[RMDB]
Chemical mapping of a 177-nucleotide RNA with DMS and 2A3. The reactions ran in a buffer of 150 mM KOAc, 10 mM MgCl2 and 150 mM bicine (pH 8.5), at 24 C. For DMS, 7,574 sequencing reads were counted. It was measured as part of the RMDB library OK2TRN. 2A3 adducts were read by reverse transcription with SuperScript II with manganese.

RNA sequence: GGGAACGACUCGAGUAGAGUCGAAAAAUCAGCUUUUAAGAAACACUGAUAAGGCUGAUGGUUUGUCAAUAAUAUCAGGAGCAGGUAGAGAAGAUAGGACUCAAGACUUUGUUCUUGGUUCUACUAACACUAGUAACGUGUUCGCACGUUACUAGUGAAAAGAAACAACAACAACAAC
Reactivity to DMS in 0.01 (KOAc 150mM, MgCl2 10mM, bicine 150mM(pH8.5), 24C), signal-to-noise 6, nucleotides 027 to 126: a020u000c010a020g020c020u000u010u010u000a190a080g000a190a140a100c200a140c030u000g010a130u010a030a030g010g010c010u010g000a020u000g010g000u000u000u000g000u010c070a060a060u010a070a080u000a060u000c050a040g010g010a080g000c060a030g010g020u000a050g000a110g010a090a050g010a110u000a010g000g000a020c010u000c020a010a020g000a020c020u010u000u010g010u000u000c020u000u000g000g010u000u000c010u000a020c080u000a070a170
Reactivity to 2A3 in 0.01 (KOAc 150mM, MgCl2 10mM, bicine 150mM(pH8.5), 24C), signal-to-noise 3, nucleotides 027 to 126: a000u000c010a000g000c000u080u040u040u060a110a050g070a120a260a030c090a040c130u050g040a100u050a160a020g010g000c010u000g010a030u000g030g020u060u110u090g100u040c040a050a020u100a210a030u080a050u120c040a030g050g010a010g030c020a020g060g050u110a030g030a010g010a200a000g040a120u050a010g000g020a010c020u030c300a010a000g020a010c070u230u200u290g060u150u010c000u000u000g000g000u010u000c000u020a030c020u030a060a020